[RMDB]
RNA sequence: GGGAACGACUCGAGUAGAGUCGAAAAUUCGGUUUCGACCGAAUCGAAUGCGUACUACUGGGUGAGGCGUUGUCAGCAUUAAACUCCCAAAUAGGAGUUGUGCUUGGAUUUACGCUACCCACCACCCAGUAUCGCGGAGUGCUUGCUUCGGCAAGAACUUUAACGGACGUUUCGACGUCCGUUAAAGAAAAGAAACAACAACAACAAC
Reactivity to 2A3 in 0.01 (KOAc 150mM, MgCl2 10mM, bicine 150mM(pH8.5), 24C), signal-to-noise 3, nucleotides 027 to 156: u010u000c020g020g030u060u070u180c230g140a030c040c010g000a010a010u050c040g110a140a080u150g000c000g030u060a110c030u000a000c000u030g000g020g000u000g010a010g000g000c000g000u000u010g000u000c000a000g000c010a010u060u230a150a010a020c000u020c000c000c060a180a220a130u300a090g000g000a000g000u020u020g000u050g000c000u040u140g130g000a060u210u160u190a030c000g030c000u010a110c050c000c020a000c010c000a000c010c000c000a000g000u000a010u160c010g020c010g020g070a080g040u110g060c010u000u030g010c000u050u060c200g110g000c010a000a000g110a020a030
Reactivity to DMS in 0.01 (KOAc 150mM, MgCl2 10mM, bicine 150mM(pH8.5), 24C), signal-to-noise 1, nucleotides 027 to 156: u020u000c010g020g040u000u010u010c270g000a240c020c010g010a000a040u010c010g000a070a060u010g020c040g040u000a060c210u000a010c010u000g020g000g020u010g000a110g010g010c050g000u000u000g000u000c020a100g000c000a040u010u000a110a010a090c020u000c000c000c010a070a150a190u040a070g040g010a040g020u000u010g030u050g000c000u010u010g030g000a070u010u010u000a010c010g020c000u000a030c010c020c040a300c100c020a010c000c040c000a060g000u000a010u000c010g000c020g040g000a180g000u000g020c050u000u000g020c000u000u010c220g030g020c060a070a050g000a100a120

An RNA of 207 nucleotides, treated with 2A3 and DMS and read out base by base. Reactivities are given for positions 27 through 156.